Chemical mapping of a 177-nucleotide RNA with DMS and 2A3. High 2A3 reactivity points to a flexible backbone, as in loops and unpaired stretches. The data come from the RNA Mapping Database (RMDB), library RFM100. For DMS, 690 sequencing reads were counted.
RNA sequence: GGGAACGACUCGAGUAGAGUCGAAAAGGACGCCCUUGGCAGGCUUCGGCCGUCCGGCGCGCGAUUAACGACCAACUUAGAACUGGUACGGACAAGGGGAAUCUGACUGUCUAAUUAAAACAUAGCACGUGCGUUUUUAGUUCGCUAAAAACGCACGAAAAGAAACAACAACAACAAC
Reactivity to DMS in 0.01 (KOAc 150mM, MgCl2 10mM, bicine 150mM(pH8.5), 24C), signal-to-noise 1, nucleotides 027 to 126: g000g000a180c040g010c000c000c080u000u000g050g050c030a270g070g000c070u000u100c250g000g030c040c030g000u000c040c000g050g000c100g000c000g000c040g000a270u000u000a250a110c120g050a160c000c000a000a070c230u000u120a040g000a270a190c050u000g070g000u000a000c160g000g000a100c000a000a100g030g000g000g070a150a000u010c070u000g010a070c040u000g000u080c000u000a030a030u080u000a080a000a130a190c290a120u000a150g000c180a030
Reactivity to 2A3 in 0.01 (KOAc 150mM, MgCl2 10mM, bicine 150mM(pH8.5), 24C), signal-to-noise 1, nucleotides 027 to 126: g040g010a000c010g040c000c000c000u000u000g040g010c160a060g010g000c000u020u000c090g010g000c000c010g010u060c050c000g000g020c000g000c000g000c000g060a140u140u190a090a090c020g000a010c030c030a010a050c010u140u130a050g000a020a030c000u090g000g000u090a060c000g000g020a000c000a000a070g020g120g000g000a000a000u000c020u040g030a030c060u030g100u080c010u000a060a090u110u120a010a290a030a000c180a250u070a060g070c140a000